[RMDB]
RNA sequence: GGGAACGACUCGAGUAGAGUCGAAAAGAUAUGGAGCGUCCCAUGGGCACUUGGACCAAGGCUCGGAAACGAGCCUUGCUAGUGUAGUGGGAGCGCUCCUAAGUCAAAAGCAGUGUUCGCACUGCAAGAAAUGGGUUAGGUUCGCCUAACCCAUUUCAAAAGAAACAACAACAACAAC
Reactivity to DMS in 0.01 (KOAc 150mM, MgCl2 10mM, bicine 150mM(pH8.5), 24C), signal-to-noise 4, nucleotides 027 to 126: g010a070u000a300u010g020g000a020g030c000g030u000c000c000c000a030u020g000g020g010c010a010c000u000u010g010g010a130c300c020a000a010g010g010c000u000c000g000g010a110a090a280c010g010a020g010c000c000u000u000g000c030u000a000g000u000g010u000a300g010u000g000g000g000a040g010c010g020c000u000c000c010u000a000a070g010u000c050a100a110a170a140g010c010a000g010u000g010u000u030c230g020c020a020c000u000g000c000a060a080
Reactivity to 2A3 in 0.01 (KOAc 150mM, MgCl2 10mM, bicine 150mM(pH8.5), 24C), signal-to-noise 2, nucleotides 027 to 126: g040a010u130a040u220g000g000a010g010c000g020u000c010c010c040a020u050g090g300g030c030a020c060u100u200g100g120a120c090c050a000a000g020g000c020u020c050g000g050a110a130a030c000g000a000g010c060c010u000u000g000c000u010a000g000u020g010u030a110g010u020g000g010g020a090g060c010g000c000u000c000c000u000a040a010g020u000c040a000a000a060a180g010c020a000g000u000g040u070u080c140g060c080a000c000u000g030c020a000a020
Annotation: Chemical mapping of a 177-nucleotide RNA with DMS and 2A3. DMS adducts were read by reverse transcription with MarathonRT. Conditions: 150 mM KOAc, 10 mM MgCl2 and 150 mM bicine (pH 8.5), 24 C.